The data come from the RNA Mapping Database (RMDB), library VIROID. An RNA of 177 nucleotides, treated with 2A3 and DMS and read out base by base. The 2A3 profile rests on 2,055 reads. DMS adducts were read by reverse transcription with MarathonRT. Values cover nucleotides 27 to 126. Reactivities are rounded to 0.1 and cut off at 0 and 3. The reactions ran in a buffer of 150 mM KOAc, 10 mM MgCl2 and 150 mM bicine (pH 8.5), at 24 C.
RNA sequence: GGGAACGACUCGAGUAGAGUCGAAAACCAGAGGACCCCUUCAGCGAACAGAAGAGCCUUCUCCCGGAGGAGGGGAACAUAGCGAUAGGAGGAGAUGCUAGGAGUAGGGGGAGACCGAAGCGAGGAGCCAUAAUUACAGCUUCGGCUGUAAUUAUGGAAAAGAAACAACAACAACAAC
Reactivity to 2A3 in 0.01 (KOAc 150mM, MgCl2 10mM, bicine 150mM(pH8.5), 24C), signal-to-noise 2, nucleotides 027 to 126: c010c000a000g070a060g060g040a080c010c010c000c030u020u020c040a050g000c030g070a060a040c030a090g150a150a040g030a030g020c000c000u090u030c020u020c000c020c000g030g010a060g080g010a020g000g010g000g000a040a010c030a070u190a030g030c030g120a070u080a070g050g030a010g010g030a030g010a020u120g050c020u040a040g030g100a060g010u060a080g010g000g000g000g000a020g000a020c000c000g030a000a000g000c030g030a050g000g030a010g050
Reactivity to DMS in 0.01 (KOAc 150mM, MgCl2 10mM, bicine 150mM(pH8.5), 24C), signal-to-noise 3, nucleotides 027 to 126: c040c020a130g000a120g000g020a160c040c030c030c010u010u020c040a090g010c040g000a090a080c140a070g000a090a050g000a130g010c080c030u000u000c030u000c030c030c070g010g010a130g010g000a020g000g000g000g000a030a050c080a090u010a090g010c050g010a130u010a130g000g010a070g000g000a090g010a080u000g000c080u000a070g010g000a130g020u000a070g010g000g000g020g010a110g030a050c080c010g000a070a050g020c050g000a090g020g010a080g010